[RMDB]
RNA sequence: GGGAACGACUCGAGUAGAGUCGAAAAGGUAAAUGGGUCCUCUCAUAGUCUCUUUGUGAGAGUGUAAAUUGGUGCAAACUCAUGGGUAGGCAUUUGGCUAAUUGCCUACCAACAUACUAACAUGCAAGAUGCCACACAAAGAAUCUACCAACAUACAUGAUACGCAGUUAUUCGUAACUGCGUAUCAAAAAGAAACAACAACAACAAC
Reactivity to DMS in 0.01 (KOAc 150mM, MgCl2 10mM, bicine 150mM(pH8.5), 24C), signal-to-noise 2, nucleotides 027 to 156: g020g010u000a050a100a110u010g020g040g040u000c040c020u000c010u000c050a130u000a120g010u010c000u000c040u010u000u000g040u010g010a050g010a050g000u000g020u000a010a070a200u000u010g010g000u010g020c050a090a060a100c080u000c050a080u000g020g020g040u000a030g010g010c030a040u010u000u040g010g040c140u010a080a150u000u000g000c000c000u000a060c000c010a040a030c060a070u010a100c080u000a090a140c080a040u010g010c060a020a080g010a300u000g010c040c040a080c030a100c060a040a030a090g020a060a050u020c040u000a070c000c020a080a060c040a130u000a100c080a190
Reactivity to 2A3 in 0.01 (KOAc 150mM, MgCl2 10mM, bicine 150mM(pH8.5), 24C), signal-to-noise 3, nucleotides 027 to 156: g060g000u060a030a080a090u070g040g000g010u010c000c010u100c000u000c010a050u050a110g130u020c030u040c000u210u120u090g010u020g030a050g000a020g010u070g060u100a040a150a100u050u050g050g000u040g050c010a030a030a070c030u030c120a050u060g040g020g020u020a000g030g000c010a000u010u030u130g120g000c070u100a070a050u060u050g000c000c000u000a000c000c000a000a010c020a010u110a060c020u030a100a020c010a070u070g020c050a040a020g020a080u040g020c010c010a010c000a000c030a040a060a010g040a020a060u010c030u060a080c000c040a050a040c010a070u240a040c070a090